[RMDB]
RNA sequence: GGGAACGACUCGAGUAGAGUCGAAAAGAAAAUAAGCGCGUAAUCGCGUCUUGACGUGAGUGAGCCCACACGAAUAGCUAUCCCAAGUGGGAUAGCAUAGCUCACAAUACGCUAAGAUUCGUGUGAAACUCACGCGAUAUUUCGAUAUCGCGUGAGUAAAAGAAACAACAACAACAAC
Reactivity to DMS in 0.01 (KOAc 150mM, MgCl2 10mM, bicine 150mM(pH8.5), 24C), signal-to-noise 2, nucleotides 027 to 126: g000a130a040a090a130u020a170a090g010c040g000c000g000u000a060a300u030c010g010c080g020u020c040u000u000g000a070c000g030u010g000a040g040u000g000a070g000c100c210c000a020c000a010c050g010a000a050u000a140g000c020u010a000u000c000c000c000a300a230g030u040g010g000g000a020u000a010g000c000a040u000a060g000c000u000c120a040c120a080a130u030a000c050g030c000u020a000a030g000a010u000u000c030g020u000g000u000g000a110a070
Reactivity to 2A3 in 0.01 (KOAc 150mM, MgCl2 10mM, bicine 150mM(pH8.5), 24C), signal-to-noise 5, nucleotides 027 to 126: g050a000a100a030a040u280a040a030g030c020g000c020g060u100a030a150u130c020g000c000g050u050c010u050u090g110a000c040g040u060g030a020g020u020g000a000g030c000c030c000a010c000a000c000g010a000a000u030a050g000c000u000a000u030c010c000c010a240a180g170u300g100g000g000a010u000a000g000c000a000u010a000g000c000u030c020a030c020a020a070u110a060c040g010c010u060a000a040g080a150u000u000c000g010u000g010u020g020a050a050